Chemical mapping of a 177-nucleotide RNA with DMS and 2A3. 2A3 is a SHAPE reagent: it acylates the 2'-hydroxyl of flexible nucleotides of all four kinds. The reactions ran in a buffer of 150 mM KOAc, 10 mM MgCl2 and 150 mM bicine (pH 8.5), at 24 C. For DMS, 1,232 sequencing reads were counted.
RNA sequence: GGGAACGACUCGAGUAGAGUCGAAAAGAUAUGGAUUCGACAGACAUGUUCUGUGUCGGAAACGACACUAGAACAACAGCUGUACGAAUCCUAAGUCAAAAGACUUACCGCUUCGGCGGUAAGUCAAGCGGUAAAACAAGUUCGCUUGUUUUACCGCAAAAGAAACAACAACAACAAC
Reactivity to DMS in 0.01 (KOAc 150mM, MgCl2 10mM, bicine 150mM(pH8.5), 24C), signal-to-noise 1, nucleotides 027 to 126: g010a000u010a100u020g000g010a000u010u000c000g010a010c000a000g000a030c070a160u020g000u020u010c020u040g000u000g000u000c000g020g000a020a000a060c000g030a010c000a020c040u000a010g000a010a010c000a200a110c240a040g000c000u010g020u010a160c000g030a030a020u010c000c000u000a020a110g010u010c010a130a070a140a140g010a040c030u010u010a030c010c000g010c010u000u050c270g010g000c030g000g090u000a000a020g020u000c020a080a010
Reactivity to 2A3 in 0.01 (KOAc 150mM, MgCl2 10mM, bicine 150mM(pH8.5), 24C), signal-to-noise 1, nucleotides 027 to 126: g030a010u020a010u030g020g000a000u020u010c000g000a000c000a020g040a030c110a230u300g000u000u000c000u000g020u000g000u000c020g000g000a000a010a030c000g000a000c010a010c090u300a000g010a000a000c030a040a000c110a070g020c000u020g020u210a300c000g000a000a000u000c000c010u000a000a010g010u010c020a060a060a050a070g010a000c000u010u010a000c000c020g000c080u050u070c190g240g000c000g000g000u000a010a010g040u010c000a000a000
The 2A3 profile rests on 2,784 reads.